[RMDB]
RNA sequence: GGGAACGACUCGAGUAGAGUCGAAAAGAGAUGAUUCAUGGGCUGGGGGUUCCCGGACAAUACACCCAUCUGGAGUUCAACCUAAUUACAUGGUAGAUAAAUUAAGAGUCCCUCCUCACCACUCGAAACUAUGGCAGACAUUCUAUAAGAUAACGAGGCUUUCUAGUUUAUUCGUAAACUAGAAAGCAAAAGAAACAACAACAACAAC
Reactivity to 2A3 in 0.01 (KOAc 150mM, MgCl2 10mM, bicine 150mM(pH8.5), 24C), signal-to-noise 2, nucleotides 027 to 156: g060a020g010a040u100g010a030u080u110c040a020u080g000g020g000c010u020g050g000g010g000g030u010u040c000c000c000g010g000a020c030a040a020u060a130c050a020c040c020c000a060u010c050u040g030g010a040g030u070u090c030a020a040c010c000u120a100a070u100u080a060c060a100u080g040g010u000a020g090a100u160a120a130a050u150u120a140a070g020a010g040u000c030c000c000u000c000c000u000c000a020c050c000a050c010u000c030g020a020a040a030c030u050a030u070g040g000c020a000g010a040c010a020u060u000c010u070a090u030a160a020g010a030u020a060a000c040g020a010g000
Reactivity to DMS in 0.01 (KOAc 150mM, MgCl2 10mM, bicine 150mM(pH8.5), 24C), signal-to-noise 2, nucleotides 027 to 156: g020a110g020a090u010g000a140u000u000c040a130u000g020g040g060c020u000g040g020g060g010g010u000u000c030c010c010g020g020a060c070a050a140u000a090c020a100c030c000c000a110u000c040u000g030g010a120g030u000u000c050a050a100c080c000u000a070a080u000u000a070c040a010u000g000g000u000a060g000a150u000a020a080a150u000u020a100a190g010a140g000u000c010c020c000u000c010c020u000c030a080c040c040a010c020u010c030g010a120a050a060c030u000a040u000g020g030c040a120g010a090c020a070u000u000c050u000a120u000a050a110g000a110u020a070a140c040g010a240g000
This 207-nucleotide RNA was probed chemically with 2A3 and DMS. The DMS profile rests on 2,564 reads. Conditions: 150 mM KOAc, 10 mM MgCl2 and 150 mM bicine (pH 8.5), 24 C. Reactivities are given for positions 27 through 156.